[RMDB]
RNA sequence: GGGAACGACUCGAGUAGAGUCGAAAAAUCGAACGAUUACACUCGGUUUUAUGAUCAGUUAGCCACUUCAGUUCGCAAUCAGCUUGGGAAUUGGUACCGUCAAGGCUAUAUUCGUUCGGCUGAAAACCGUAACCAAAGUGUUCGCACUUUGGUUACGAAAAGAAACAACAACAACAAC
Reactivity to DMS in 0.01 (KOAc 150mM, MgCl2 10mM, bicine 150mM(pH8.5), 24C), signal-to-noise 4, nucleotides 027 to 126: a060u000c010g010a010a020c040g000a050u000u000a170c300a130c080u000c110g010g010u000u000u010u000a110u030g000a050u000c030a070g000u010u000a030g000c010c010a120c150u000u000c030a040g020u000u000c000g000c030a060a040u020c190a100g020c290u000u010g000g000g000a020a010u000u000g020g010u000a040c130c080g010u000c210a080a130g010g010c010u010a040u000a040u000u000c020g010u000u000c020g020g020c110u000g010a070a030a060a100c140
Reactivity to 2A3 in 0.01 (KOAc 150mM, MgCl2 10mM, bicine 150mM(pH8.5), 24C), signal-to-noise 3, nucleotides 027 to 126: a000u040c000g010a010a010c010g010a030u060u140a050c030a010c070u090c070g020g100u040u020u080u170a230u240g050a040u060c000a010g010u040u040a000g000c010c010a070c040u080u030c040a020g000u000u000c100g020c180a020a060u090c030a060g080c050u050u030g000g000g100a010a020u030u010g030g030u080a120c020c040g090u090c080a120a070g010g000c000u030a030u010a010u100u000c000g000u000u000c000g020g050c030u070g040a040a000a040a000c030
Conditions: 150 mM KOAc, 10 mM MgCl2 and 150 mM bicine (pH 8.5), 24 C.
An RNA of 177 nucleotides, treated with DMS and 2A3 and read out base by base.
For DMS the reverse transcriptase was MarathonRT.
It was measured as part of the RMDB library OK2TST.